[RMDB]
RNA sequence: GGGAACGACUCGAGUAGAGUCGAAAACUAACAGCGUGAGCUGUUAGACAGACGACGUGAGUCGUCUGAAGCAGUUCGUGAGAACUGCAGAAGACCGCGUGAGCGGUCUUCAACCAUUCACUUCGGUGAAUGGACUAUAACUCUACGGAGUUAUAGACUGGUCGCUACGGCGACCAGAACUGAGUACUUCGGUACUCAGAACGUAGACUACGGUCUACGACUAGAUCUACGGAUCUAGAGCGAUUUCUGACCGCUUUUUUGUCAGUACGAUAAUGUUCGCAUUAUCGAAAAGAAACAACAACAACAAC
Reactivity to 2A3 in 0.01 (KOAc 150mM, MgCl2 10mM, bicine 150mM(pH8.5), 24C), signal-to-noise 5, nucleotides 027 to 266: c000u000a000a000c000a000g010c000g060u100g100a060g010c000u000g000u000u000a000g000a000c000a000g010a000c010g000a000c020g130u140g130a090g030u020c000g000u000c000u000g010a050a030g000c000a000g000u010u020c020g050u080g080a180g000a030a000c000u000g000c020a010g000a000a000g000a000c010c000g010c050g090u110g090a060g020c000g000g000u000c000u000u000c000a000a000c000c000a000u000u000c000a010c000u050u060c200g080g000u000g000a000a000u000g000g000a000c000u010a000u000a000a000c000u000c010u030a050c300g170g000a000g000u000u000a000u000a000g050a020c000u000g010g000u000c000g000c020u040a060c300g140g000c010g000a000c000c000a000g000a040a010c000u000g000a000g000u010a000c000u020u110c270g100g000u000a000c000u000c000a000g030a080a020c000g000u000a010g000a000c000u020a030c280g090g000u000c010u000a000c000g000a010c000u000a000g000a000u000c010u020a020c300g140g000a000u000c000u000a010g010a010g020c000g020a040u050u130u060c010u000g010a010c000c000g070c030u190u210u070u040u200u150g010u000c000a000g010u000a030
Reactivity to DMS in 0.01 (KOAc 150mM, MgCl2 10mM, bicine 150mM(pH8.5), 24C), signal-to-noise 2, nucleotides 027 to 266: c010u000a010a000c010a010g020c010g020u010g000a240g000c000u000g000u000u000a000g000a300c000a010g010a020c000g020a010c000g020u020g000a200g000u000c000g030u000c020u020g000a200a250g000c010a020g000u000u000c000g040u020g010a230g020a010a010c000u000g010c000a110g010a000a010g010a010c030c010g060c030g000u010g000a180g050c040g010g020u000c000u020u000c000a140a240c030c010a000u010u000c000a030c010u000u040c120g020g010u000g010a000a000u010g010g000a140c000u000a000u010a000a000c000u000c000u020a150c090g020g010a010g010u000u000a000u000a000g020a300c010u010g010g010u010c000g080c020u000a140c130g020g050c000g020a000c000c010a020g010a140a230c050u010g000a010g010u000a000c020u000u020c110g000g000u000a000c000u000c010a030g000a100a130c000g000u000a000g000a010c000u000a150c090g060g010u000c000u000a000c000g000a070c020u000a010g000a000u000c000u020a080c150g010g020a000u000c030u000a000g000a020g000c000g000a130u010u010u000c000u000g000a000c000c010g000c000u010u000u000u010u000u010g010u010c010a020g010u010a090

The data come from the RNA Mapping Database (RMDB), library POS240. An RNA of 307 nucleotides, treated with 2A3 and DMS and read out base by base. Reactivities are given for positions 27 through 266. DMS adducts were read by reverse transcription with MarathonRT. The RNA was probed in 150 mM KOAc, 10 mM MgCl2 and 150 mM bicine (pH 8.5) at 24 C. 2A3 adducts were read by reverse transcription with SuperScript II with manganese. High 2A3 reactivity points to a flexible backbone, as in loops and unpaired stretches.